RNA sequence: GGGAACGACUCGAGUAGAGUCGAAAAUUUGAUGUGACGAUCCUUUCCCCAAAUUACCGACUUUGAUUAUACUGUGCGAUUUUUCGAGUUCUGUCUCCUCGGAGAUGGCUCUUAAGCCAGAUAUUCUGAUCGAAACCCACUACGGUUCGCCGUAGUAAUAGUCGGAAAGGUUCGCCUUUCCGACUAUAAAAGAAACAACAACAACAAC
Reactivity to 2A3 in 0.01 (KOAc 150mM, MgCl2 10mM, bicine 150mM(pH8.5), 24C), signal-to-noise 1, nucleotides 027 to 156: u060u040u150g010a020u020g130u080g060a040c060g030a110u080c120c000u030u060u050c000c030c000c000a000a090a090u040u010a060c030c020g000a000c010u120u070u030g010a010u060u130a010u090a130c010u050g060u150g120c020g210a120u000u070u050u040u250c020g000a020g000u020u220c050u040g020u010c000u020c000c040u050c060g000g000a000g000a000u010g000g010c030u000c010u050u040a050a000g000c000c000a000g010a000u010a020u040u000c000u030g070a110u040c010g000a070a050a040c000c030c010a030c030u070a000c000g010g010u050u000c130g020c030c000g190u090a000g000u110a020
Overview: Structure probing data (2A3) for a 207-nucleotide construct. For 2A3, 626 sequencing reads were counted. It was measured as part of the RMDB library RFM130. Values are in units of 0.01, from 0 to 300, in steps of 10.